[RMDB]
RNA sequence: GGGAACGACUCGAGUAGAGUCGAAAACGAGAGGAACUGUCAUGCCGGAUCACUGGUCUGUAGGUUUAUUUGACAAAAUAGUGACCUGCCGCUACCAUCCGUUGGAUAAUGGCUGAACGCCUCUAAGUCAGAAUCCAUUCUAGAAACGCAAACCAAAGUUGGAAUUCUAGUUCGCUAGAAUUCCAACAAAAGAAACAACAACAACAAC
Reactivity to DMS in 0.01 (KOAc 150mM, MgCl2 10mM, bicine 150mM(pH8.5), 24C), signal-to-noise 1, nucleotides 027 to 156: c050g000a040g020a050g050g000a090a160c020u010g010u020c020a050u010g060c060c020g010g000a130u000c040a070c080u000g020g000u000c080u030g070u010a090g030g020u000u000u000a030u000u000u020g010a250c220a100a080a080a040u010a060g000u000g020a050c070c000u000g030c020c130g000c120u000a030c030c040a090u000c010c020g000u000u020g040g000a080u010a040a090u020g030g000c010u010g010a110a030c060g000c010c000u000c020u040a050a020g000u020c050a050g000a170a130u000c010c020a100u000u010c090u010a100g000a060a080a070c040g030c050a050a060a090c020c030a030a050a240
Reactivity to 2A3 in 0.01 (KOAc 150mM, MgCl2 10mM, bicine 150mM(pH8.5), 24C), signal-to-noise 3, nucleotides 027 to 156: c060g000a010g000a010g000g030a100a140c010u010g060u050c010a020u030g080c040c000g000g010a020u040c000a030c090u000g020g050u150c040u050g060u030a000g000g000u030u030u050a050u030u050u090g140a070c060a020a070a040a050u070a030g090u060g060a000c000c000u000g000c000c010g000c030u050a010c050c000a010u010c010c000g060u090u110g060g000a080u050a160a030u130g000g000c000u000g030a110a020c070g070c010c000u020c010u030a060a020g030u010c020a010g040a050a070u030c010c000a020u100u060c070u080a030g070a050a170a010c070g040c150a070a030a040c070c020a110a030a090
The record gives the reactivity of an RNA of 207 nucleotides to DMS and 2A3.
Values cover nucleotides 27 to 156.
Values are in units of 0.01, from 0 to 300, in steps of 10.
The RNA was probed in 150 mM KOAc, 10 mM MgCl2 and 150 mM bicine (pH 8.5) at 24 C.